Structure probing data (2A3 and DMS) for a 177-nucleotide construct. For 2A3, 13,856 sequencing reads were counted. Conditions: 150 mM KOAc, 10 mM MgCl2 and 150 mM bicine (pH 8.5), 24 C. For 2A3 the reverse transcriptase was SuperScript II with manganese.

RNA sequence: GGGAACGACUCGAGUAGAGUCGAAAAUAUAGUGGCGUUACGCCUCAUAGACUAUUACCGUGCUAAGUGGCCACAUAGGCCGAGCGUACGCGAUAGGCUCGAGCCAGAUGCUAGCAACCUAGCAGAGCGUAUUAGUCACUUUCGAGUGACUAAUACGAAAAGAAACAACAACAACAAC
Reactivity to 2A3 in 0.01 (KOAc 150mM, MgCl2 10mM, bicine 150mM(pH8.5), 24C), signal-to-noise 9, nucleotides 027 to 126: u180a010u030a040g050u040g010g010c060g110u190u240a140c150g000c000c000u030c010a060u120a030g090a020c030u040a040u150u130a080c000c050g040u040g000c010u050a090a060g050u060g060g000c020c010a050c050a080u090a080g010g000c000c010g000a010g000c040g140u120a040c110g050c080g280a190u060a100g070g000c000u010c020g020a050g010c000c010a090g010a070u030g000c020u020a020g000c020a020a050c020c000u010a010g000c010a020g030a020g070
Reactivity to DMS in 0.01 (KOAc 150mM, MgCl2 10mM, bicine 150mM(pH8.5), 24C), signal-to-noise 4, nucleotides 027 to 126: u030a040u010a070g000u000g000g030c010g000u030u030a090c150g010c020c000u020c100a090u020a080g000a130c090u020a060u030u000a110c040c030g040u010g000c000u000a020a040g000u000g010g000c000c070a100c050a020u010a090g000g020c010c000g000a030g040c000g020u010a050c040g000c170g000a160u010a050g000g000c010u000c000g010a110g010c000c010a120g000a030u000g010c090u000a030g010c070a030a070c090c030u010a030g000c010a030g020a140g000